[RMDB]
RNA sequence: GGGAACGACUCGAGUAGAGUCGAAAAAUACAUACUGACACAGGUUGCUCAACAGGCUGUGUGGGACAAUAGAAUAACAAGGCUGUCAAUUUGAGCUUGACGGCUGCAAACCGAAUGGAGUGAAAUCGUAACCGGACUCACUUCGGUGAGUCCGGAACUUACUCAGAUGGUUCGCCAUCUGAGUAAGAAAAGAAACAACAACAACAAC
Reactivity to DMS in 0.01 (KOAc 150mM, MgCl2 10mM, bicine 150mM(pH8.5), 24C), signal-to-noise 1, nucleotides 027 to 156: a130u000a080c000a110u010a130c040u000g010a100c060a080c050a040g040g010u000u000g060c020u000c210a120a120c050a060g000g010c010u000g020u000g010u000g030g040g030a050c050a050a080u020a070g030a150a130u010a040a050c100a100a220g000g040c010u010g040u000c010a010a070u010u020u000g000a100g000c300u000u000g030a020c040g000g000c000u000g080c060a040a130a090c010c010g030a070a150u000g000g000a140g010u000g000a040a060a120u020c070g000u010a080a090c010c000g000g000a060c000u010c010a000c070u000u010c290g000g000u010g030a070g010u000c010c000g000g010a000a010
Reactivity to 2A3 in 0.01 (KOAc 150mM, MgCl2 10mM, bicine 150mM(pH8.5), 24C), signal-to-noise 2, nucleotides 027 to 156: a000u100a000c070a020u080a070c000u070g060a000c000a010c000a080g300g080u100u060g050c010u100c060a120a020c010a070g110g000c010u010g000u010g020u050g060g010g010a010c050a050a100u090a120g120a080a120u150a160a070c070a130a010g090g010c010u010g000u020c000a010a010u110u090u070g040a060g110c010u020u020g000a000c000g030g000c010u000g000c010a050a080a030c050c020g060a050a110u160g060g080a110g070u100g010a110a080a030u160c050g000u040a080a050c020c020g000g010a010c000u010c020a000c000u020u020c110g070g000u000g000a010g000u000c000c000g010g000a000a000